[RMDB]
RNA sequence: GGGAACGACUCGAGUAGAGUCGAAAAGAAAGAAAGAAAUUAGCUCGCCAGUUAGCGAGGUCUGUCCCCACACGACAGAUACUCGGGUGCAACUCCCGCCCCUUUUCCGAGGGUCAUCGGAACCAAAAAAACUCAGGCAACUUCGGUUGCCUGAGAACUGUUUGCAUACGUUCGCGUAUGCAAACAGAAAAGAAACAACAACAACAAC
Reactivity to 2A3 in 0.01 (KOAc 150mM, MgCl2 10mM, bicine 150mM(pH8.5), 24C), signal-to-noise 1, nucleotides 027 to 156: g070a020a030a010g100a020a080a020g080a020a110a020u130u060a150g020c000u010c000g050c010c000a200g120u220u240a020g030c010g010a010g000g010u010c000u000g030u000c030c000c010c000a030c010a010c080g000a010c000a000g120a060u010a030c000u010c020g000g000g000u040g080c020a000a030c060u000c000c000c000g050c020c010c000c000u140u190u060u000c000c000g000a020g020g000g070u050c030a010u010c000g010g010a000a000c040c010a000a120a070a100a010a010a030c010u000c000a000g010g000c020a000a020c010u110u140c200g060g020u010u040g000c000c000u000g000a000g010a000a020

Source: RMDB library M2RFPK, as collected in RNAgym. The record gives the reactivity of an RNA of 207 nucleotides to 2A3. Reactivities are given for positions 27 through 156. High 2A3 reactivity points to a flexible backbone, as in loops and unpaired stretches.